[RMDB]
RNA sequence: GGGAACGACUCGAGUAGAGUCGAAAAUUUUCUUGUUGGAAAUGAUACGCACCUUUAUUACAGCACCUAGGGUUGCGUCUGGUAUUGUCGUAUAUGAAGCCGGUAAGCAUGGAUGGUAUAAUCAAUACUAUAUCUAUAUAUCUUGGUAUAUAGCUAAUAAAGGAUGAACAUUCGUGUUCAUCCUUUAAAAAGAAACAACAACAACAAC
Reactivity to DMS in 0.01 (KOAc 150mM, MgCl2 10mM, bicine 150mM(pH8.5), 24C), signal-to-noise 1, nucleotides 027 to 156: u000u000u010u010c020u010u010g010u000u000g020g010a080a080a120u000g020a170u000a070c050g040c040a100c020c010u010u030u000a040u020u020a140c060a120g020c070a110c090c030u010a100g030g020g020u000u000g040c000g000u000c060u030g020g040u000a070u010u000g040u000c040g030u000a150u000a060u000g010a070a090g020c010c010g000g000u000a060a120g030c040a110u020g030g010a060u000g010g010u000a070u010a070a150u000c010a040a160u000a100c010u010a130u000a130u000c000u000a060u000a050u000a080u010c010u010u010g000g000u020a030u000a030u010a030g010c080u000a040a130